RNA sequence: GGGAACGACUCGAGUAGAGUCGAAAAAGUUCUAGUCCUCACCUAAGAUCAGACUCACAAGGCCCUCAAAGUAAGAGCACUCGGUUGGGCUUUGUGGUGGGGAUUAGUGUCUCAUUUUUAGUCCCAAAUUAAAAACGAGAUUUUGGGCUGUACAUCAACCCACCAUAAUAUUCGUAUUAUGGUGGGUAAAAGAAACAACAACAACAAC
Reactivity to DMS in 0.01 (KOAc 150mM, MgCl2 10mM, bicine 150mM(pH8.5), 24C), signal-to-noise 2, nucleotides 027 to 156: a100g010u010u020c030u000a050g000u010c000c000u010c000a060c020c030u000a100a140g000a090u000c120a230g020a160c150u010c000a220c030a040a010g010g000c000c000c010u010c090a070a080a120g030u000a060a190g000a190g000c140a050c020u000c040g030g070u010u000g000g020g010c020u010u000u000g040u020g010g040u000g010g000g030g010a060u000u000a020g020u000g050u000c010u010c030a040u000u010u000u000u010a070g030u000c020c040c060a020a040a100u010u010a000a020a040a040a040c030g010a020g030a150u000u000u000u000g010g000g010c100u030g010u000a040c080a160u020c060a120
Reactivity to 2A3 in 0.01 (KOAc 150mM, MgCl2 10mM, bicine 150mM(pH8.5), 24C), signal-to-noise 2, nucleotides 027 to 156: a000g050u090u020c030u040a010g010u000c000c010u000c000a000c010c060u140a150a040g010a160u110c090a070g110a190c060u030c030a020c010a020a010g020g000c010c010c000u060c070a140a100a000g010u070a070a000g100a060g160c050a030c060u030c060g180g000u080u020g030g000g000c000u000u000u000g000u000g000g010u010g000g000g000g000a000u000u000a010g010u000g030u000c010u000c030a090u030u130u060u050u260a000g070u160c010c000c000a030a000a000u100u070a050a040a080a030a000c120g020a040g000a130u050u050u000u000g000g000g000c020u090g100u230a060c060a070u160c040a030

Source: RMDB library OK3TST, as collected in RNAgym. The record gives the reactivity of an RNA of 207 nucleotides to DMS and 2A3. DMS adducts were read by reverse transcription with MarathonRT. For 2A3, 814 sequencing reads were counted. The RNA was probed in 150 mM KOAc, 10 mM MgCl2 and 150 mM bicine (pH 8.5) at 24 C. Reactivities are given for positions 27 through 156.